The data come from the RNA Mapping Database (RMDB), library M2RFPK. The record gives the reactivity of an RNA of 207 nucleotides to 2A3. The 2A3 profile rests on 751 reads.
[RMDB]
RNA sequence: GGGAACGACUCGAGUAGAGUCGAAAAGAAGAAGAGGCUAGGGGCUAUUCCGGUGUGGGAUACUUAGUAAUAUGCAACGCUAAUUGCAUAAGAUUGUAGGACGGAAUUUACAGUCUUGGUUUUUCAAUGAAGCUUGGGGUCUUCGGACCCCAAGCAAGUUUGAAUUAAGCUUCGGCUUAAUUCAAACAAAAGAAACAACAACAACAAC
Reactivity to 2A3 in 0.01 (KOAc 150mM, MgCl2 10mM, bicine 150mM(pH8.5), 24C), signal-to-noise 1, nucleotides 027 to 156: g020a020a010g000a030a050g020a000g000g000c060u080a020g040g000g010g000c000u090a120u020u090c060c030g000g020u080g000u070g050g010g030a040u050a120c020u010u010a030g030u080a090a090u020a060u070g000c020a040a010c040g020c190u130a150a000u080u020g000c000a000u010a030a080g020a020u050u110g020u050a010g000g080a010c020g030g080a040a030u070u060u160a050c030a010g020u060c010u060u090g000g020u120u090u020u050u080c040a070a050u070g050a110a000g020c000u010u020g020g010g000g000u000c000u010u000c020g030g010a010c000c040c010c010a000a010g010c000a000a000